[RMDB]
RNA sequence: GGGAACGACUCGAGUAGAGUCGAAAAGUGAGAAAGGAGCUGCCAGCACUAAGCCGGACGGCGCCCUCGCACCAGUUCCGCUGUGGGUUCGCCUACAAGAACGUACGGUGUUGAGGCCCUGUCCGCCGCUGCGCUGCCACCUACUCUCGCCGCGCUACUAUACCCUUUUCUUCGGAAAAGGGUAUAGAAAAGAAACAACAACAACAAC
Reactivity to 2A3 in 0.01 (KOAc 150mM, MgCl2 10mM, bicine 150mM(pH8.5), 24C), signal-to-noise 3, nucleotides 027 to 156: g040u020g000a000g000a000a020a010g000g000a020g000c010u010g010c010c000a000g010c020a040c140u150a070a040g090c050c010g020g000a000c000g020g030c100g010c060c020c010u000c000g000c000a000c000c000a010g010u000u000c000c000g030c020u010g000u000g010g020g010u050u070c220g110c060c000u010a000c000a020a140g000a000a000c000g020u170a020c080g000g000u020g000u080u300g010a000g000g000c000c000c020u030g000u000c000c000g000c010c010g000c000u010g010c060g000c030u010g000c000c000a130c010c000u010a030c020u000c010u010c020g040c020c020g120c040g030c040u140a070
Reactivity to DMS in 0.01 (KOAc 150mM, MgCl2 10mM, bicine 150mM(pH8.5), 24C), signal-to-noise 1, nucleotides 027 to 156: g060u000g020a040g010a110a100a070g030g000a110g020c010u030g010c110c000a070g000c020a100c010u000a130a180g030c140c050g030g000a090c000g000g030c040g040c060c000c000u010c040g060c000a000c020c000a300g000u000u000c010c010g000c150u010g010u000g030g010g010u000u010c300g010c050c000u020a070c010a140a040g010a080a020c010g030u000a100c090g040g030u000g000u000u010g030a030g020g000c010c050c000u000g010u000c010c040g010c050c080g000c090u040g000c020g060c000u000g010c040c020a050c000c020u000a040c040u000c030u000c040g020c100c060g000c040g030c020u010a180